[RMDB]
The record gives the reactivity of an RNA of 207 nucleotides to 2A3 and DMS. 2A3 adducts were read by reverse transcription with SuperScript II with manganese. The RNA was probed in 150 mM KOAc, 10 mM MgCl2 and 150 mM bicine (pH 8.5) at 24 C.
RNA sequence: GGGAACGACUCGAGUAGAGUCGAAAAUGGGAUUCGACAGGCGCAGACCCGCGCUGGUUGCGAUUCGUAGGUUACGUCUACGUUAAAACGUUAAACAGUUUAAAUUAACUGCAAACGAAAACUCAUACGCUGUAGCUGCUUAGUUCAGCCCAGCUGCGCAUCAAUAGUGGUUCGCCACUAUUGAUGCAAAAGAAACAACAACAACAAC
Reactivity to 2A3 in 0.01 (KOAc 150mM, MgCl2 10mM, bicine 150mM(pH8.5), 24C), signal-to-noise 5, nucleotides 027 to 156: u090g030g000g040a050u050u020c020g000a020c060a040g020g020c010g000c020a060g040a180c020c030c050g000c010g000c040u040g090g030u120u130g020c010g020a040u000u090c000g010u020a000g000g040u070u040a010c020g030u020c020u000a010c010g010u010u020a040a040a000a000c020g010u030u000a060a140a030c010a010g000u020u050u110a210a300a300u110u100a030a010c020u020g060c100a110a060a030c050g050a100a030a030a060c030u040c060a040u070a160c080g010c000u020g020u030a050g000c000u010g020c030u170u140a050g010u230u180c010a000g000c000c000c030a000g000c000u070g010c030
Reactivity to DMS in 0.01 (KOAc 150mM, MgCl2 10mM, bicine 150mM(pH8.5), 24C), signal-to-noise 1, nucleotides 027 to 156: u010g090g000g030a270u000u010c090g070a160c090a070g040g010c020g000c010a070g000a160c070c010c060g000c030g000c060u020g000g030u020u000g010c040g010a270u000u000c030g000u010a050g060g040u000u000a000c230g020u010c000u000a060c010g020u000u000a060a020a110a190c030g000u000u000a140a270a050c010a020g020u000u000u010a090a060a170u030u000a010a020c030u000g050c010a160a040a020c030g000a090a100a110a100c070u000c050a110u000a110c040g000c010u010g010u000a040g030c000u000g000c050u000u000a130g000u010u020c030a050g030c010c020c000a100g000c020u000g050c150